[RMDB]
RNA sequence: GGGAACGACUCGAGUAGAGUCGAAAAACGAAUCAUACGUGAUGCGAGAACUACAGUUCCGCUCCUCUAGCACACAGAGGUCAAUUGGGUGCGACCCCCCCCUCUCCCGUGGGUCAACGGGAACCAAAAAAGACCCUUUAGUUCGCUAAAGGGUCAAUCAUAUAUGUCACUUCGGUGACAUAUAUGAAAAAGAAACAACAACAACAAC
Reactivity to 2A3 in 0.01 (KOAc 150mM, MgCl2 10mM, bicine 150mM(pH8.5), 24C), signal-to-noise 3, nucleotides 027 to 156: a000c040g040a020a070u140c060a110u220a220c090g020u060g060a090u150g060c030g020a240g010a210a030c070u270a190c140a160g010u000u000c000c000g000c000u040c020c000u010c010u030a040g000c010a000c000a000c000a000g010a020g030g050u070c040a000a060u120u080g040g000g000u000g020c020g190a220c000c010c000c010c000c000c000c000u030c020u010c020c000c000g000u010g000g000g020u080c020a000a000c000g000g010g000a000a000c010c000a000a020a060a040a000a110g010a000c000c000c020u000u000u000a000g010u030u050c160g000c150u000a000a010a020g000g000g000u000c000a000a000
Reactivity to DMS in 0.01 (KOAc 150mM, MgCl2 10mM, bicine 150mM(pH8.5), 24C), signal-to-noise 2, nucleotides 027 to 156: a130c040g000a120a060u000c080a130u010a150c190g020u000g010a070u000g010c050g020a170g020a060a070c030u030a110c090a200g000u000u000c010c000g010c010u000c000c030u000c080u000a070g050c060a110c030a090c090a050g000a010g040g020u000c110a070a130u000u000g000g000g020u000g000c060g000a300c010c000c020c040c070c010c000c020u000c070u000c000c000c020g000u000g050g010g020u000c160a060a030c000g020g030g000a040a100c040c040a020a030a100a050a090a130g000a030c000c000c000u000u000u000a020g000u000u000c300g030c030u000a000a000a010g010g020g000u000c000a000a020
Chemical mapping of a 207-nucleotide RNA with 2A3 and DMS.
Conditions: 150 mM KOAc, 10 mM MgCl2 and 150 mM bicine (pH 8.5), 24 C.
2A3 adducts were read by reverse transcription with SuperScript II with manganese.
The 2A3 profile rests on 1,957 reads.